This 207-nucleotide RNA was probed chemically with DMS and 2A3. Values are in units of 0.01, from 0 to 300, in steps of 10. For DMS, 2,599 sequencing reads were counted.

[RMDB]
RNA sequence: GGGAACGACUCGAGUAGAGUCGAAAAGGUAUGAUUAGGGUGAGACCUAGGAACCGUAGGGGUAUUCUCAAAGAAAGCUUUUGCAGUGACGCCCAUGUAAGUGGGAUAUAACAACAGAACUCGUAUGUGUGGCACAGAGAGUUCGCUCUCUGUGCAAGUAGGAUCUAAGUUUCGACUUAGAUCCUACAAAAGAAACAACAACAACAAC
Reactivity to DMS in 0.01 (KOAc 150mM, MgCl2 10mM, bicine 150mM(pH8.5), 24C), signal-to-noise 1, nucleotides 027 to 156: g020g020u000a040u000g000a140u000u000a050g020g000g040u000g000a120g030a150c030c000u000a110g010g010a170a040c020c030g020u030a080g010g000g010g050u000a110u000u000c030u010c000a070a080a130g020a050a080a110g010c030u010u000u000u000g010c040a050g020u000g000a120c160g000c010c010c040a070u010g000u000a050a100g020u000g020g000g010a090u000a100u010a170a090c030a090a110c050a080g000a020a020c040u000c050g000u000a080u000g010u010g050u000g000g000c020a000c010a000g010a050g000a050g040u000u010c300g000c020u010c000u000c000u000g020u000g010c010a010a040
Reactivity to 2A3 in 0.01 (KOAc 150mM, MgCl2 10mM, bicine 150mM(pH8.5), 24C), signal-to-noise 2, nucleotides 027 to 156: g040g000u060a050u100g040a090u070u130a030g000g060g020u050g090a120g040a070c020c030u030a030g060g040a040a080c060c060g030u060a040g000g000g000g020u030a060u100u040c030u000c050a060a080a000g090a010a110a020g030c020u010u000u110u120g010c050a030g020u030g050a020c050g010c000c010c010a000u050g110u120a080a060g030u030g020g000g000a010u010a020u020a090a030c100a000a030c020a040g060a080a050c040u030c150g030u110a070u110g080u020g000u040g040g000c010a000c000a000g000a000g000a000g000u060u020c040g020c000u000c000u020c000u000g010u000g010c000a000a000